The record gives the reactivity of an RNA of 207 nucleotides to DMS and 2A3. The reactions ran in a buffer of 150 mM KOAc, 10 mM MgCl2 and 150 mM bicine (pH 8.5), at 24 C. 2A3 adducts were read by reverse transcription with SuperScript II with manganese. For DMS the reverse transcriptase was MarathonRT.
[RMDB]
RNA sequence: GGGAACGACUCGAGUAGAGUCGAAAAGGUAUGAUUAGGGUGAGACCUAGGAACCGUAGGGGUAUUCUCAAAGGAAGCUUUUGCAGUGACGCCCAUGUAAAUGGGAUAUAACAACAGAACUCGUAUGUGUGGCACAGAGAGUUCGCUCUCUGUGCAAUCUUCCUCUAAACUUCGGUUUAGAGGAAGAAAAAGAAACAACAACAACAAC
Reactivity to DMS in 0.01 (KOAc 150mM, MgCl2 10mM, bicine 150mM(pH8.5), 24C), signal-to-noise 2, nucleotides 027 to 156: g010g020u000a040u000g010a090u010u010a040g010g010g000u030g010a230g020a110c040c040u030a130g020g010a110a070c030c030g040u000a030g030g040g000g000u000a060u010u010c030u000c030a090a110a160g020g010a060a080g020c040u000u010u000u000g010c040a070g010u000g000a150c140g030c000c000c000a010u010g000u020a080a120a050u010g020g010g020a020u000a050u000a100a100c030a040a100c050a080g010a020a040c040u010c060g030u000a100u020g000u000g020u010g000g000c010a040c000a060g010a030g020a030g030u000u000c300g030c010u000c010u000c000u000g010u000g010c000a000a040
Reactivity to 2A3 in 0.01 (KOAc 150mM, MgCl2 10mM, bicine 150mM(pH8.5), 24C), signal-to-noise 2, nucleotides 027 to 156: g060g000u100a050u160g060a130u090u110a040g020g010g010u040g050a090g030a060c000c020u040a060g050g040a040a050c040c060g070u130a020g000g000g000g000u040a090u100u070c080u020c050a110a090a000g020g000a030a020g030c000u000u040u150u130g000c050a040g020u010g030a010c070g030c010c010c000a000u000g060u130a070a120a030u000g000g000g000a010u050a030u040a070a010c060a020a000c000a040g060a070a040c040u020c140g040u110a110u140g110u010g000u030g030g000c020a020c000a010g000a000g000a000g000u060u060c060g070c010u000c000u000c030u000g000u000g010c000a000a000
Source: RMDB library M2RFPK, as collected in RNAgym.